The data come from the RNA Mapping Database (RMDB), library 15KLIB. Structure probing data (2A3) for a 170-nucleotide construct.
[RMDB]
RNA sequence: GGGAACGACUCGAGUAGAGUCGAAAACACCCCCCAGCGGUGCCGAGUGAGGCCUAUCCCGGGGAUCGGUGAAUCGUCCCGGAAUGGGGACUCCGAGGGCCCCUUCCGAAGUGACGGGGGGGGGUCAGCAGCCUUGGCUUCGGCCAAGGCAAAAGAAACAACAACAACAAC
Reactivity to 2A3 in 0.01 (KOAc 150mM, MgCl2 10mM, bicine 150mM(pH8.5), 24C), signal-to-noise 3, nucleotides 027 to 129: c020a000c000c000c000c000c000c000a000g090c040g150g020u120g040c010c010g030a050g030u300g010a010g020g080c030c000u030a010u020c000c000c020g000g010g000g000a080u180c030g060g040u100g080a060a110u140c030g060u060c000c000c000g000g050a000a010u030g010g000g000g110a160c000u030c000c000g030a130g000g010g010c000c000c000c030u020u000c000c020g020a080a030g070u080g230a090c040g000g020g000g000g000g000g010g000g030u020c020a070g040c000a020

About this RNA: Reactivities are given for positions 27 through 129.